[RMDB]
RNA sequence: GGGAACGACUCGAGUAGAGUCGAAAACCCACACAGUUGUUCCCACUCUUAUUUGUGACUAUGGCCUUCGUUAUGUUGUUGGUUAAACACAAACACACCUUUUUGACACUUUUCUUGUUGCCUGUGGACGCUGAGAGGUUCGCCUCUCAGAAAAGAAACAACAACAACAAC
Reactivity to DMS in 0.01 (KOAc 150mM, MgCl2 10mM, bicine 150mM(pH8.5), 24C), signal-to-noise 5, nucleotides 027 to 129: c060c030c000a120c180a160c050a000g020u000u090g010u020u050c040c020c030a080c160u060c130u060u030a000u000u000u000g020u020g050a070c090u060a000u020g010g010c030c030u020u050c090g000u030u080a080u070g020u000u000g040u030u010g000g000u000u000a030a080a070c030a110c020a000a000a000c110a110c070a090c060c060u000u000u000u000u000g040a120c090a090c080u050u060u020u010c040u040u050g040u000u000g030c080c020u020g020u030g000g060a000c220g010
Reactivity to 2A3 in 0.01 (KOAc 150mM, MgCl2 10mM, bicine 150mM(pH8.5), 24C), signal-to-noise 8, nucleotides 027 to 129: c010c040c000a000c000a000c000a010g010u020u010g000u010u010c000c040c000a040c040u080c040u070u200a200u100u140u080g080u050g000a030c050u060a040u110g060g000c020c010u060u070c090g060u100u100a130u240g120u140u090g000u000u000g040g040u040u110a060a120a010c030a030c040a020a130a000c090a010c010a100c070c030u070u080u010u070u140g040a020c040a030c060u080u050u040u020c010u010u060g010u050u050g020c000c030u040g010u030g040g010a030c050g010